Source: RMDB library OK2TST, as collected in RNAgym. The record gives the reactivity of an RNA of 177 nucleotides to DMS.
RNA sequence: GGGAACGACUCGAGUAGAGUCGAAAAGAGGUAGACCAGUCCUGCAGGCGUCCUCGCCGCAGCCCUCGCCGAGAGCAACGCCGCACCCGCCAGACCCCUGCUCCCCGCCCACACCCCCACACGCCCCAGAUACGAUUACCUUCGGGUAAUCGUAUCUAAAAGAAACAACAACAACAAC
Reactivity to DMS in 0.01 (KOAc 150mM, MgCl2 10mM, bicine 150mM(pH8.5), 24C), signal-to-noise 1, nucleotides 027 to 126: g000a130g010g030u010a000g010a200c020c060a060g010u010c060c030u000g010c070a080g030g010c030g000u010c140c090u010c070g000c080c040g040c060a070g000c050c000c020u020c070g000c070c030g010a080g000a060g020c070a040a020c070g030c060c100g010c120a050c040c020c040g010c020c020a130g000a100c080c010c040c020u000g030c030u000c040c000c040c040g000c000c030c030a070c080a150c070c030c020c030c030a060c070a050c050g000c000c010c020c130
The DMS profile rests on 770 reads.